Notes
Chemical mapping of a 177-nucleotide RNA with 2A3. Conditions: 150 mM KOAc, 10 mM MgCl2 and 150 mM bicine (pH 8.5), 24 C. The 2A3 profile rests on 1,095 reads.
RNA sequence: GGGAACGACUCGAGUAGAGUCGAAAAGGAACUAUGUUCAGGCAUGAAGCCUCCACGUGCGUGCGAAAGCACCCGGAAACGGCUGAGCAUAGUUCCGAGCUGAAGGAGGCACGGCUCAAAAUAAAAAGAUCACGCACUCAUUCGUGAGUGCGUGAUCAAAAGAAACAACAACAACAAC
Reactivity to 2A3 in 0.01 (KOAc 150mM, MgCl2 10mM, bicine 150mM(pH8.5), 24C), signal-to-noise 1, nucleotides 027 to 126: g010g000a000a000c000u000a010u030g000u000u000c010a000g000g040c000a000u000g060a100a040g010c000c000u000c010c000a020c000g000u000g000c000g010u000g000c000g050a160a050a000g000c000a000c000c010c000g010g000a040a150a020c030g000g000c000u000g000a000g000c010a000u000a000g000u010u010c000c010g010a000g000c000u000g010a180a030g000g000a000g000g050c050a030c030g000g010c010u000c000a050a080a000a060u300a040a050a020a040a000
The data come from the RNA Mapping Database (RMDB), library OK1LIB.